Structure probing data (2A3 and DMS) for a 177-nucleotide construct.
2A3 adducts were read by reverse transcription with SuperScript II with manganese.
For 2A3, 3,719 sequencing reads were counted.
Conditions: 150 mM KOAc, 10 mM MgCl2 and 150 mM bicine (pH 8.5), 24 C.

[RMDB]
RNA sequence: GGGAACGACUCGAGUAGAGUCGAAAAGCAGGUGGACUGAGUUGUAACCCAUUGAUCUGCAUCAUGAUUCGCCUGUGGAAGGCGGGGGUCAGGGGUUCGAAUCCCUAGGCCCCACCGUGUGACGACCCGAUUACGUAUCCUUCGGGAUACGUAAUCGAAAAGAAACAACAACAACAAC
Reactivity to 2A3 in 0.01 (KOAc 150mM, MgCl2 10mM, bicine 150mM(pH8.5), 24C), signal-to-noise 5, nucleotides 027 to 126: g010c010a010g000g040u020g000g010a040c020u020g030a050g170u110u050g060u160a220a260c010c010c020a040u070u170g020a060u020c000u050g010c030a050u010c010a010u080g090a300u020u030c010g020c010c000u030g020u080g070g060a050a040g060g020c100g010g000g010g000g000u020c010a030g030g000g020g000u050u080c050g060a060a070u050c000c000c000u050a130g000g010c000c000c020c000a010c000c010g010u040g030u050g060a070c030g020a040c000c000
Reactivity to DMS in 0.01 (KOAc 150mM, MgCl2 10mM, bicine 150mM(pH8.5), 24C), signal-to-noise 3, nucleotides 027 to 126: g000c010a020g010g000u000g000g000a090c030u020g000a120g010u010u010g000u000a080a090c040c030c030a080u010u040g000a030u010c070u020g000c050a050u010c060a040u010g020a090u010u010c000g000c000c000u000g000u000g030g050a130a110g020g000c060g010g040g020g000g000u000c080a080g020g020g000g000u010u000c300g000a170a120u050c000c000c000u010a100g010g000c010c000c000c020a010c020c010g010u020g000u010g000a200c100g000a180c060c000